This 177-nucleotide RNA was probed chemically with 2A3 and DMS.
The data come from the RNA Mapping Database (RMDB), library OK2TST.
For 2A3, 866 sequencing reads were counted.
[RMDB]
RNA sequence: GGGAACGACUCGAGUAGAGUCGAAAAUCGCAACUACUUCUAUGUGGAGGGUAAAGAUCUUGUGAUUAAAACUCCAGGAAUCUACCAGGUCACUUUUGAAAUCACUAGAAUGGGAGGGCAACACUCAUGAGACAUACUAGUUCGCUAGUAUGUCUCAAAAAGAAACAACAACAACAAC
Reactivity to 2A3 in 0.01 (KOAc 150mM, MgCl2 10mM, bicine 150mM(pH8.5), 24C), signal-to-noise 1, nucleotides 027 to 126: u030c000g000c050a060a040c020u160a040c010u070u090c070u070a080u060g020u090g000g200a230g090g000g010u090a060a060a060g050a020u000c020u050u050g040u000g010a000u010u090a000a080a000a000c040u080c010c010a020g060g000a060a090u090c080u060a150c030c010a050g000g050u060c050a020c000u120u090u060u040g060a060a040a000u100c010a010c020u020a000g030a070a040u050g010g040g050a230g060g000g020c010a040a010c030a010c040u090c010a080
Reactivity to DMS in 0.01 (KOAc 150mM, MgCl2 10mM, bicine 150mM(pH8.5), 24C), signal-to-noise 3, nucleotides 027 to 126: u010c090g010c100a160a090c060u000a100c090u000u010c060u010a160u010g000u010g010g000a090g000g000g020u010a070a070a100g000a070u010c010u020u010g000u000g030a020u010u010a090a050a080a090c240u000c010c010a070g000g020a100a090u020c200u010a100c040c020a080g000g020u000c070a070c120u000u010u000u000g000a100a040a060u000c030a010c010u000a030g010a020a090u000g000g000g000a100g010g010g000c100a040a070c160a040c110u010c090a120
The reactions ran in a buffer of 150 mM KOAc, 10 mM MgCl2 and 150 mM bicine (pH 8.5), at 24 C.